An RNA of 170 nucleotides, treated with 2A3 and DMS and read out base by base. It was measured as part of the RMDB library 15KLIB. DMS adducts were read by reverse transcription with MarathonRT. Reactivities are given for positions 27 through 129.
RNA sequence: GGGAACGACUCGAGUAGAGUCGAAAACAAAGAAAGCAACGGGGCUAGCGAGUGGAUGUUCCUCCCCCCGAAGGUCCCGAGUGAGGCUUAUCCCGGGGAUCGGCCUCUGUCCCUCCAUGGUGAGCUCGAAUCGGGUCGUUCGCGACCCGAAAAAGAAACAACAACAACAAC
Reactivity to 2A3 in 0.01 (KOAc 150mM, MgCl2 10mM, bicine 150mM(pH8.5), 24C), signal-to-noise 2, nucleotides 027 to 129: c090a000a120a010g230a060a060a000g040c010a000a060c050g020g000g000g000c000u010a010g060c010g010a000g020u060g020g100a110u180g040u010u030c030c000u010c000c000c000c000c000c000g000a050a030g000g000u010c000c000c000g000a040g030u120g040a010g030g010c030u020u030a070u070c030c010c000g000g100g000g000a020u010c000g020g020c000c010u000c020u020g060u020c020c010c000u010c000c000a040u050g040g000u170g060a020g010c000u000c030g020a010a020
Reactivity to DMS in 0.01 (KOAc 150mM, MgCl2 10mM, bicine 150mM(pH8.5), 24C), signal-to-noise 2, nucleotides 027 to 129: c190a060a110a110g010a160a120a090g000c130a000a000c120g010g000g050g000c000u030a050g000c000g030a090g010u030g010g080a100u060g030u000u000c100c060u010c000c000c000c000c000c000g000a090a020g000g000u040c000c020c070g030a110g050u010g020a120g000g000c050u000u000a070u010c020c010c080g130g000g060g000a010u000c110g010g000c040c020u020c120u040g010u010c020c000c040u030c000c000a090u030g040g060u000g040a120g030c000u050c050g010a070a110